[RMDB]
RNA sequence: GGGAACGACUCGAGUAGAGUCGAAAAAUGAAUUGAGGUGGUAGUAACAGUGUCAGCAUCUGUAGAUGAUGGACCACUCGUUCCUUUUUCAGUAUUAGAAGUGUUACAGCUAGACCAGAGGUCAUCUAAGGAUAAUCUUGGAACAAAACUGGCCACCGUAGCAACGUAGAUUCGUCUACGUUGCUACAAAAGAAACAACAACAACAAC
Reactivity to 2A3 in 0.01 (KOAc 150mM, MgCl2 10mM, bicine 150mM(pH8.5), 24C), signal-to-noise 5, nucleotides 027 to 156: a000u060g050a020a050u150u190g030a070g050g020u030g030g020u070a050g030u030a100a050c040a060g020u040g060u110c040a010g080c010a050u000c010u050g160u140a110g030a180u130g000a030u030g040g020a010c030c020a030c030u040c030g010u010u030c020c000u020u030u000u050u080c090a040g060u040a110u120u130a060g050a170a010g030u020g050u180u100a080c030a030g000c040u050a050g030a100c010c020a080g040a050g130g040u020c040a040u000c070u040a060a100g100g000a100u050a180a040u150c020u040u030g000g030a070a000c040a050a090a000a030c010u020g050g000c000c010a030c070c040
Reactivity to DMS in 0.01 (KOAc 150mM, MgCl2 10mM, bicine 150mM(pH8.5), 24C), signal-to-noise 2, nucleotides 027 to 156: a080u000g010a100a130u020u010g030a080g010g010u010g010g070u000a120g040u010a070a160c100a120g000u000g010u000c040a090g020c020a050u020c010u050g040u010a160g020a050u000g000a070u000g010g040a100c010c010a020c010u000c010g000u000u000c000c010u030u000u000u000u020c070a130g030u010a180u010u000a160g010a060a130g010u000g000u000u010a120c000a070g000c000u000a110g020a110c010c000a300g020a100g030g040u000c030a050u000c020u000a100a160g040g000a060u000a040a030u010c020u010u000g030g030a060a080c040a210a100a060a090c020u000g010g010c060c030a060c090c040